[RMDB]
RNA sequence: GGGAACGACUCGAGUAGAGUCGAAAAGGACGGGGUCAGCCUUGCAUAGGUUCAAGUCUGCCAGAUACAGCGAAGGAGGGUAUUCUUCUGUAUGCCCGAACCUCCUCUCUCAUAUUUCUGUUAGUACCGAUCAGCAGUGAUUCGUCACUGCUGAUCGAAAAGAAACAACAACAACAAC
Reactivity to 2A3 in 0.01 (KOAc 150mM, MgCl2 10mM, bicine 150mM(pH8.5), 24C), signal-to-noise 4, nucleotides 027 to 126: g020g010a010c000g000g020g010g020u060c020a000g030c010c020u020u090g040c060a150u100a200g160g000u080u020c010a030a000g010u000c000u010g000c000c000a020g020a050u070a030c040a000g030c000g110a070a050g030g030a020g000g070g000u150a170u090u000c000u090u000c020u040g060u010a020u070g020c000c000c020g040a090a110c000c010u000c000c040u030c000u000c010u000c000a060u050a120u090u160u010c030u020g100u110u060a090g030u080a080c000
Reactivity to DMS in 0.01 (KOAc 150mM, MgCl2 10mM, bicine 150mM(pH8.5), 24C), signal-to-noise 2, nucleotides 027 to 126: g000g040a160c130g020g000g040g000u020c060a000g000c050c000u060u000g050c200a120u040a020g020g020u040u010c080a040a020g000u030c000u000g060c000c060a160g040a030u010a000c060a120g010c300g000a020a020g000g000a100g000g000g000u000a170u030u000c020u040u010c030u000g000u000a030u000g010c000c010c030g040a060a200c060c020u000c030c000u000c010u000c000u020c060a070u040a080u040u000u000c000u000g000u010u000a060g000u070a110c170
An RNA of 177 nucleotides, treated with 2A3 and DMS and read out base by base. 2A3 adducts were read by reverse transcription with SuperScript II with manganese. The RNA was probed in 150 mM KOAc, 10 mM MgCl2 and 150 mM bicine (pH 8.5) at 24 C. DMS adducts were read by reverse transcription with MarathonRT.